Structure probing data (2A3 and DMS) for a 177-nucleotide construct.
RNA sequence: GGGAACGACUCGAGUAGAGUCGAAAAGGGACAUCAAUUGGUGGUCGAGGAAGAGUUAUCUUUUCUUAUUAACACUGUCUUGAAGUCCAUUGAAUCAGGUCAACUGGAGACGUGGAUUUAUCGCACAGCAAUACAAGCAAUUCGUUGCUUGUAUUGCAAAAGAAACAACAACAACAAC
Reactivity to 2A3 in 0.01 (KOAc 150mM, MgCl2 10mM, bicine 150mM(pH8.5), 24C), signal-to-noise 9, nucleotides 027 to 126: g050g000g010a010c000a030u040c020a040a090u080u130g020g000u020g010g050u110c090g010a020g020g020a010a010g030a010g060u160u190a180u170c000u000u060u060u020c020u050u050a110u070u040a080a020c010a010c030u060g080u170c030u040u070g020a040a010g010u000c000c000a020u030u160g060a020a030u040c010a020g010g120u120c080a090a070c110u060g040g040a080g000a040c030g040u050g020g010a030u050u060u070a190u140c070g010c040a040c030a060
Reactivity to DMS in 0.01 (KOAc 150mM, MgCl2 10mM, bicine 150mM(pH8.5), 24C), signal-to-noise 6, nucleotides 027 to 126: g020g020g010a020c010a080u000c030a090a060u010u020g010g020u000g010g010u020c220g010a050g020g000a030a010g020a040g000u020u040a080u020c010u000u000u000u000c020u010u000a120u020u010a120a110c070a060c020u000g020u020c110u000u010g020a030a030g010u000c000c010a070u000u010g000a090a070u000c040a070g020g020u000c110a080a120c090u010g010g000a090g010a140c100g020u010g000g000a060u020u000u010a090u020c090g000c120a070c160a130

For 2A3 the reverse transcriptase was SuperScript II with manganese. DMS adducts were read by reverse transcription with MarathonRT. Source: RMDB libraries RFM100 and RFMREP, as collected in RNAgym.